[RMDB]
Conditions: 150 mM KOAc, 10 mM MgCl2 and 150 mM bicine (pH 8.5), 24 C.
Chemical mapping of a 177-nucleotide RNA with 2A3 and DMS.
It was measured as part of the RMDB library 15KREP.
The 2A3 profile rests on 3,486 reads.
In probing experiments dimethyl sulfate is read out at A N1 and C N3, which are open when not base-paired.

RNA sequence: GGGAACGACUCGAGUAGAGUCGAAAAAUACCGAACAGACACAGAAUGUUACUGUUAAACCUAAGAGGUUACGCAAAAAGCGUAAUGUUGACCCUUUGUCCAAUUUUGAACAUAAGGUUAUUACAGACAAUAACAAAUUCUUCGGAAUUUGUUAUUGAAAAGAAACAACAACAACAAC
Reactivity to 2A3 in 0.01 (KOAc 150mM, MgCl2 10mM, bicine 150mM(pH8.5), 24C), signal-to-noise 3, nucleotides 027 to 126: a000u050a030c000c000g020a030a010c010a010g110a030c020a000c010a120g260a260a110u110g040u070u100a100c000u000g020u030u060a070a050a010c000c010u070a120a020g070a020g170g010u000u010a010c000g000c020a000a030a130a150a140g000c000g000u020a000a030u080g030u060u130g030a050c020c000c000u000u020u040g020u000c040c000a110a140u200u170u130u180g030a030a000c020a030u120a110a030g030g000u030u060a070u070u090a070c010a010g060a030
Reactivity to DMS in 0.01 (KOAc 150mM, MgCl2 10mM, bicine 150mM(pH8.5), 24C), signal-to-noise 5, nucleotides 027 to 126: a110u010a090c040c040g010a060a060c070a050g020a110c120a080c120a170g020a060a300u000g000u010u000a120c020u000g010u000u000a070a060a080c020c050u010a080a070g010a110g010g010u000u000a010c020g010c010a040a070a070a120a120g000c020g000u000a030a020u000g020u000u010g000a080c130c020c020u000u000u000g010u000c010c000a020a190u010u010u000u000g000a010a000c000a020u020a030a040g010g020u010u010a060u000u000a050c100a080g000a190